An RNA of 177 nucleotides, treated with DMS and 2A3 and read out base by base. It was measured as part of the RMDB library OK2TRN. DMS adducts were read by reverse transcription with MarathonRT. The RNA was probed in 150 mM KOAc, 10 mM MgCl2 and 150 mM bicine (pH 8.5) at 24 C. The DMS profile rests on 4,904 reads. Values cover nucleotides 27 to 126.
RNA sequence: GGGAACGACUCGAGUAGAGUCGAAAACACCCUCGCCAGGUACGGUGAAGUCGGGUACAGUGAGGCCGACGCGGCGAGGAUGACCAGUCUCGCGGAGAGUCUCAUCCGGAUGCUCGAGGGGGUCGCCGAGCCGAAUACUUUUCGAAGUAUUCGGCUCAAAAGAAACAACAACAACAAC
Reactivity to DMS in 0.01 (KOAc 150mM, MgCl2 10mM, bicine 150mM(pH8.5), 24C), signal-to-noise 5, nucleotides 027 to 126: c120a100c040c010c000u010c030g030c020c030a130g020g020u010a080c140g010g020u010g000a070a130g010u000c010g010g010g010u010a070c070a170g010u010g010a100g020g000c010c000g020a120c030g010c110g030g000c020g010a060g010g010a030u010g000a130c100c110a170g010u000c030u000c020g000c040g000g020a140g000a130g010u000c020u000c050a110u000c040c040g000g030a140u010g000c050u000c030g000a080g010g010g020g000g010u000c030g010c080c040
Reactivity to 2A3 in 0.01 (KOAc 150mM, MgCl2 10mM, bicine 150mM(pH8.5), 24C), signal-to-noise 4, nucleotides 027 to 126: c050a050c000c000c010u000c010g000c010c010a120g060g150u170a100c100g060g050u100g120a090a030g070u030c030g050g020g020u190a100c060a070g120u090g160a050g050g130c040c000g020a030c060g000c030g150g000c020g010a010g020g010a040u110g070a020c040c010a010g130u010c000u030c020g090c030g030g040a070g010a030g050u010c030u020c040a110u000c030c000g070g030a100u120g020c040u040c040g010a020g000g040g000g000g000u010c020g000c080c060